Chemical mapping of a 177-nucleotide RNA with DMS and 2A3. Conditions: 150 mM KOAc, 10 mM MgCl2 and 150 mM bicine (pH 8.5), 24 C.

RNA sequence: GGGAACGACUCGAGUAGAGUCGAAAACUUAGUCAUCGAUUUAUUAGUUAAAAAUUUAGGGCCAGCAGCACAAGCGAUGGUUAAAAAUUUAGGCGUCAGUCUGAAUGUGAUUGAUGUAGGUUGGCCAAAGUGAAGUAGAGUUCGCUCUACUUCACUUAAAAGAAACAACAACAACAAC
Reactivity to DMS in 0.01 (KOAc 150mM, MgCl2 10mM, bicine 150mM(pH8.5), 24C), signal-to-noise 5, nucleotides 027 to 126: c030u000u000a010g020u010c000a010u000c000g010a130u040u030u020a090u040u040a130g000u010u020a030a080a050a060a120u010u010u010a120g020g000g020c000c000a000g020c000a130g010c070a060c140a080a100g010c010g010a020u000g000g000u010u010a010a050a060a060a060u000u000u000a030g010g010c000g000u040c250a030g010u000c010u010g000a020a030u010g010u000g000a090u010u000g000a050u010g010u010a050g010g020u000u000g000g000c000c010a050
Reactivity to 2A3 in 0.01 (KOAc 150mM, MgCl2 10mM, bicine 150mM(pH8.5), 24C), signal-to-noise 4, nucleotides 027 to 126: c000u000u020a000g030u040c000a000u000c010g050a080u120u140u070a200u190u150a080g110u100u140a150a070a030a030a120u190u220u200a150g010g040g000c000c000a010g000c000a000g000c010a030c030a240a060g030c000g000a000u000g030g050u020u050a030a010a040a060a070u090u140u080a050g070g000c000g020u050c030a020g020u000c030u070g090a140a120u270g060u130g090a060u030u020g040a040u030g020u060a050g090g020u030u000g000g000c000c000a000

For DMS the reverse transcriptase was MarathonRT.
The data come from the RNA Mapping Database (RMDB), library OK1LIB.